This 177-nucleotide RNA was probed chemically with 2A3 and DMS. It was measured as part of the RMDB library OK2TRN.
[RMDB]
RNA sequence: GGGAACGACUCGAGUAGAGUCGAAAAGGAGUGCUACCGAAAGGUAGCACUCCAACAAAUCGGUGUAAGGGCAGCCCCACUUACACCGUGCGGCACAGCGGAAACGCUGAUGUCGUAUACUGGGCUACAUAUACCAUAGGUUCGCCUAUGGUAUAUGAAAAGAAACAACAACAACAAC
Reactivity to 2A3 in 0.01 (KOAc 150mM, MgCl2 10mM, bicine 150mM(pH8.5), 24C), signal-to-noise 4, nucleotides 027 to 126: g000g000a000g010u000g000c000u000a000c000c010g060a080a080a090g010g000u000a000g010c000a000c000u000c000c000a000a000c000a000a010a010u060c000g000g000u000g000u000a000a010g010g040g040c070a010g020c020c010c000c010a060c000u000u000a000c000a000c000c000g000u000g000c000g000g010c000a000c000a010g000c000g020g020a090a060a010c010g020c000u000g010a090u000g000u000c000g010u000a000u020a010c090u080g000g010g010c000u010a010
Reactivity to DMS in 0.01 (KOAc 150mM, MgCl2 10mM, bicine 150mM(pH8.5), 24C), signal-to-noise 8, nucleotides 027 to 126: g010g000a030g030u000g010c000u000a000c000c000g010a120a110a190g010g020u000a000g010c000a000c000u000c000c000a030a050c110a030a070a050u010c010g010g010u000g000u000a000a010g010g000g010c110a060g000c020c000c000c080a190c010u000u000a000c000a000c000c000g030u000g010c000g000g000c000a010c000a000g010c010g010g000a120a100a160c000g020c000u000g000a050u000g030u000c000g020u000a050u010a050c170u010g020g000g000c010u000a300
For 2A3 the reverse transcriptase was SuperScript II with manganese. DMS adducts were read by reverse transcription with MarathonRT. Conditions: 150 mM KOAc, 10 mM MgCl2 and 150 mM bicine (pH 8.5), 24 C. The 2A3 profile rests on 34,810 reads.